[RMDB]
RNA sequence: GGGAACGACUCGAGUAGAGUCGAAAACUGAGAAACCCCGUCCUGCUUGGAUGAUGCAGGUAUGUGGACUUGCUGGAAAACAGGUCCUCAUACCCUAACUGCGGAAACCGGUCGAGGCCCGGAAGGGAGCAGACUCACUGUGGGCAACCGUCGCUUGCUCAUUUUCAAUCUUCGGAUUGAAAAUGAGAAAAGAAACAACAACAACAAC
Reactivity to 2A3 in 0.01 (KOAc 150mM, MgCl2 10mM, bicine 150mM(pH8.5), 24C), signal-to-noise 2, nucleotides 027 to 156: c070u070g020a040g110a120a120a050c010c030c010c000g040u020c000c000u060g090c080u090u260g010g020a040u080g020a050u090g050c030a010g000g010u000a010u010g030u010g010g010a000c000u020u030g010c080u200g070g200a040a040a030a040c010a020g000g010u000c000c000u000c000a000u000a000c000c000c020u070a150a110c040u080g000c010g020g030a100a050a040c060c010g010g020u040c010g050a050g030g080c070c010c000g080g060a050a060g060g010g000a020g020c070a020g050a100c000u000c040a030c030u100g000u120g030g000g000c020a030a000c010c020g130u070c060g050c070u020u070g000